Record summary: This 207-nucleotide RNA was probed chemically with 2A3 and DMS. For 2A3 the reverse transcriptase was SuperScript II with manganese. The reactions ran in a buffer of 150 mM KOAc, 10 mM MgCl2 and 150 mM bicine (pH 8.5), at 24 C.

[RMDB]
RNA sequence: GGGAACGACUCGAGUAGAGUCGAAAAUCUAAUGAUGAUGAUGGCAAUGAUAAUGACAACAAUAACAACUAACUCAUGAAAUGUGACACUGCUUAUCAUGUGUCAGGCACCGUACUCAGCUCUUGCCAUGCCUUAUCUCAUUUUAAUCUUCACAGCAGCUAAAUUAUGGUUUCGACCAUAAUUUAGCAAAAGAAACAACAACAACAAC
Reactivity to 2A3 in 0.01 (KOAc 150mM, MgCl2 10mM, bicine 150mM(pH8.5), 24C), signal-to-noise 9, nucleotides 027 to 156: u050c030u060a050a010u040g040a010u030g010a010u020g020a010u070g010g010c020a040a050u140g050a040u070a110a090u160g060a050c040a090a020c020a090a140u170a140a030c070a050a020c060u140a040a030c020u040c080a030u070g100a080a080a050u190g030u030g050a030c030a020c090u060g040c040u100u120a060u200c030a040u110g010u000g010u040c010a000g030g030c040a030c070c070g060u130a090c060u070c080a030g030c020u010c010u070u050g000c000c010a010u030g030c010c000u060u070a030u000c010u000c010a010u000u040u030u060a110a130u050c090u210u150c090a060c040a090g010c020a000
Reactivity to DMS in 0.01 (KOAc 150mM, MgCl2 10mM, bicine 150mM(pH8.5), 24C), signal-to-noise 4, nucleotides 027 to 156: u000c060u010a060a070u010g010a070u000g020a040u020g010a060u000g020g020c000a080a090u010g040a150u000a090a090u000g010a130c030a030a060c070a060a110u010a130a130c070a090a100c060u000a040a050c070u000c050a080u000g010a050a070a080u010g030u000g030a070c060a060c060u010g020c080u010u010a110u000c040a070u000g030u000g020u000c030a040g010g010c030a060c100c060g010u000a070c080u010c050a080g000c040u000c060u000u010g050c020c010a080u000g010c030c020u000u000a060u000c040u010c030a070u000u000u000u000a040a110u000c040u000u000c040a130c050a130g030c090a190